This 177-nucleotide RNA was probed chemically with 2A3 and DMS. 2A3 adducts were read by reverse transcription with SuperScript II with manganese. Conditions: 150 mM KOAc, 10 mM MgCl2 and 150 mM bicine (pH 8.5), 24 C.
[RMDB]
RNA sequence: GGGAACGACUCGAGUAGAGUCGAAAAUUAACAGAAAUCUGCUGUGGUUUGGCAAUUAGAUUUGUUUGAGAUGUCUACGGAAAGAUGGCAGGGACGGUGGGUCUACCUGACGUACCAGAACAACAUAACUUAUCAGUACGUUCGCGUACUGAUAAGUAAAAGAAACAACAACAACAAC
Reactivity to 2A3 in 0.01 (KOAc 150mM, MgCl2 10mM, bicine 150mM(pH8.5), 24C), signal-to-noise 7, nucleotides 027 to 126: u070u020a090a030c040a030g100a050a090a030u050c030u080g000c010u040g030u040g100g020u050u070u070g060g000c010a040a070u110u040a100g110a220u070u030u080g150u050u070u130g120a110g010a080u040g030u030c030u080a050c040g010g070a050a060a050g070a040u040g040g020c020a000g020g020g040a000c030g030g030u060g040g030g000u020c010u030a110c030c010u040g020a040c030g040u030a080c010c020a040g070a080a030c040a020a010c010a060u180a170
Reactivity to DMS in 0.01 (KOAc 150mM, MgCl2 10mM, bicine 150mM(pH8.5), 24C), signal-to-noise 6, nucleotides 027 to 126: u040u040a110a100c090a090g010a050a100a060u020c030u020g010c020u010g000u020g000g020u010u010u010g000g000c060a050a050u030u020a070g000a060u010u020u010g010u010u010u000g000a090g010a060u020g020u000c040u000a060c060g010g020a060a060a090g010a060u010g010g000c070a080g010g010g010a040c060g010g020u000g000g000g010u020c020u010a060c070c040u010g000a080c070g010u010a090c020c020a070g010a110a100c150a040a090c200a070u040a090